Structure probing data (2A3 and DMS) for a 177-nucleotide construct. The RNA was probed in 150 mM KOAc, 10 mM MgCl2 and 150 mM bicine (pH 8.5) at 24 C. For DMS, 58,050 sequencing reads were counted. For DMS the reverse transcriptase was MarathonRT. 2A3 adducts were read by reverse transcription with SuperScript II with manganese.
RNA sequence: GGGAACGACUCGAGUAGAGUCGAAAAGGCCAAGGUGUAUGCAGGCUCUUUGUUUGAGUCAGAUUGCUACUGGCUGGUUAACGCAUCUAACCCUGGCCACCGGCCUGGUGGUGGUCUCUGCCAUGCAAUCAAAGACUUAAUUCGUUAAGUCUUUGAUAAAAGAAACAACAACAACAAC
Reactivity to 2A3 in 0.01 (KOAc 150mM, MgCl2 10mM, bicine 150mM(pH8.5), 24C), signal-to-noise 9, nucleotides 027 to 126: g030g010c010c010a020a020g030g000u040g010u040a030u090g050c060a030g040g000c020u030c040u120u160u190g280u100u190u140g020a000g000u000c020a020g030a200u080u160g020c020u040a100c050u050g060g000c010u000g010g000u050u100a090a020c070g000c020a020u010c040u080a070a090c000c010c010u010g010g010c000c000a020c010c010g050g020c000c030u050g040g000u030g000g020u020g000g050u020c060u010c010u040g010c020c000a050u060g010c020a030
Reactivity to DMS in 0.01 (KOAc 150mM, MgCl2 10mM, bicine 150mM(pH8.5), 24C), signal-to-noise 9, nucleotides 027 to 126: g010g010c010c010a050a060g010g020u000g010u000a030u000g020c050a160g010g000c020u000c030u000u010u010g010u010u010u000g010a030g020u000c020a070g010a140u000u010g010c080u000a080c070u000g010g010c020u000g010g010u000u000a070a100c200g010c030a030u000c110u010a150a090c030c010c070u000g010g000c010c020a070c050c030g010g010c040c040u000g010g020u000g000g020u000g000g000u000c050u000c070u000g010c040c030a050u000g010c090a170